Background
The record gives the reactivity of an RNA of 177 nucleotides to DMS and 2A3. The reactions ran in a buffer of 150 mM KOAc, 10 mM MgCl2 and 150 mM bicine (pH 8.5), at 24 C. The data come from the RNA Mapping Database (RMDB), libraries RFM100 and RFMREP.

[RMDB]
RNA sequence: GGGAACGACUCGAGUAGAGUCGAAAAACAUAGCGUAUACGUACGCUAUGAGCCUCCUUAGCGAAUAGUCGUCCGGUUAACGGCGUGCUUGUCAGUAAGACGACAAGAUAGCUUGGGAGGUUUUCAACAACAAAUAACCCUUCGGGGUUAUUUGUUGAAAAGAAACAACAACAACAAC
Reactivity to DMS in 0.01 (KOAc 150mM, MgCl2 10mM, bicine 150mM(pH8.5), 24C), signal-to-noise 4, nucleotides 027 to 126: a150c000a000u000a000g000c010g020u000a020u000a040c170g010u010a000c000g000c010u000a000u000g010a090g000c000c000u000c000c010u000u000a010g000c010g000a140a010u010a300g000u000c000g000u000c070c110g030g000u030u040a150a040c010g000g000c000g000u000g000c000u010u000g010u010c000a060g000u010a150a160g010a230c220g000a010c000a000a010g000a010u000a010g010c000u000u000g000g000g000a010g000g020u000u000u010u010c010a080a170
Reactivity to 2A3 in 0.01 (KOAc 150mM, MgCl2 10mM, bicine 150mM(pH8.5), 24C), signal-to-noise 7, nucleotides 027 to 126: a000c000a000u010a000g010c000g020u000a030u020a040c250g100u010a000c000g020c000u000a000u010g010a010g010c010c000u000c000c000u000u020a000g010c000g010a020a020u010a010g020u030c010g020u040c070c120g260g070u140u190a040a020c000g000g000c020g000u010g000c000u000u010g000u000c010a050g040u070a140a030g120a060c090g000a000c000a000a000g010a010u000a000g000c000u010u010g010g000g000a010g000g000u010u020u020u010c010a010a010